The data come from the RNA Mapping Database (RMDB), library OK1LIB. Chemical mapping of a 177-nucleotide RNA with DMS and 2A3. The RNA was probed in 150 mM KOAc, 10 mM MgCl2 and 150 mM bicine (pH 8.5) at 24 C. DMS adducts were read by reverse transcription with MarathonRT.
RNA sequence: GGGAACGACUCGAGUAGAGUCGAAAAGGCGAAUAUAGCGCAAUAAAAGGAUACCAUAAGCUACGACGCCGAGUUAGAAACGAAGGCACUCGAAUGGUAGUGCUCGCAAAGCUGCGACGAAGAGCCAAAUAUAAAUGUUAUUCGUAACAUUUAUAUUAAAAGAAACAACAACAACAAC
Reactivity to DMS in 0.01 (KOAc 150mM, MgCl2 10mM, bicine 150mM(pH8.5), 24C), signal-to-noise 9, nucleotides 027 to 126: g010g010c010g010a070a140u030a230u010a010g010c020g020c200a090a100u050a060a070a090a110g000g010a140u030a050c040c030a040u010a090a080g000c020u000a040c060g000a300c000g000c010c000g010a140g000u010u010a040g000a080a050a040c030g000a100a080g000g010c020a020c030u000c020g000a110a070u010g000g010u010a020g010u000g000c030u010c030g010c080a040a120a150g010c070u010g010c030g010a080c120g010a070a080g010a100g000c030c060a080
Reactivity to 2A3 in 0.01 (KOAc 150mM, MgCl2 10mM, bicine 150mM(pH8.5), 24C), signal-to-noise 7, nucleotides 027 to 126: g020g000c010g040a100a010u180a020u040a110g030c010g000c040a040a040u140a070a070a020a010g120g020a070u060a100c010c010a030u030a060a040g000c010u010a020c030g070a010c000g000c010c000g000a010g010u050u070a040g040a050a080a010c030g030a080a020g050g000c020a010c020u010c010g090a090a060u060g040g010u040a010g020u010g010c020u030c010g000c000a060a120a060g030c070u070g030c030g040a050c030g040a090a040g030a010g100c020c000a000